[RMDB]
RNA sequence: GGGAACGACUCGAGUAGAGUCGAAAAGCUAAGUAGUUCGCUACUUAGCAAAUAAAAACAGCGGUUAAAAAGGAGGCGUUAUAACCGCUGAACGCCUCCUUAAAAGUGUGCGCUUCGGCGCACACAACCAAUAUCAAUUGUUCGCAAUUGAUAUUGGAAAAGAAACAACAACAACAAC
Reactivity to 2A3 in 0.01 (KOAc 150mM, MgCl2 10mM, bicine 150mM(pH8.5), 24C), signal-to-noise 3, nucleotides 027 to 126: g000c000u000a000a000g000u010a000g020u030u100c180g030c080u010a000c000u000u000a000g000c000a010a000a000u010a000a020a000a000a010c020a020g030c040g090g070u110u140a130a120a080a020a000g000g010a010g000g010c010g010u010u040a110u060a170a020c030c020g000c020u010g010a000a000c000g000c000c000u000c000c000u010u040a010a050a010a000g000u000g000u000g000c030g010c010u030u080c240g080g000c000g000c000a000c000a000c000a000a000
Reactivity to DMS in 0.01 (KOAc 150mM, MgCl2 10mM, bicine 150mM(pH8.5), 24C), signal-to-noise 4, nucleotides 027 to 126: g000c000u000a000a010g010u000a000g020u010u020c240g020c000u000a000c000u000u000a010g010c000a020a060a050u010a040a080a070a060a120c080a060g010c070g010g000u000u010a030a050a100a030a030g020g010a020g010g010c000g020u000u000a050u010a100a100c040c050g000c060u010g000a010a020c010g000c000c000u000c010c000u000u000a010a060a060a100g020u010g000u010g010c020g020c000u000u010c220g020g000c000g020c010a010c010a010c010a060a110